[RMDB]
RNA sequence: GGGAACGACUCGAGUAGAGUCGAAAAGUACAGAAAAGUUAUGUGAAUAUAAAACUGUAGAACAGUGUUUACCGAUGAAGACUGGAUUAUGUGAGUGUCGUUUGCAACGAGCAUUUACUGUCAUUGUGUUUUGAGUAUAUGUUGAGGUGUUGUCUUGAGCUAUAGUAAGCUUCGGCUUACUAUAGCUAAAAGAAACAACAACAACAAC
Reactivity to 2A3 in 0.01 (KOAc 150mM, MgCl2 10mM, bicine 150mM(pH8.5), 24C), signal-to-noise 2, nucleotides 027 to 156: g020u010a010c010a020g190a010a140a060a000g010u050u000a110u190g070u050g030a090a010u210a040u100a120a110a040a040c050u060g020u030a020g050a170a030c010a020g040u020g000u050u070u140a100c020c040g020a090u050g080a070a000g000a020c060u030g030g020a060u100u110a040u230g070u050g000a000g020u080g010u000c030g050u030u110u160g080c040a060a020c010g010a020g070c000a020u040u050u090a090c050u080g060u080c020a060u030u060g060u000g030u050u070u060u150g060a030g020u050a100u010a040u200g050u040u040g020a010g060g080u040g000u000u010g010u020c000u020u080g010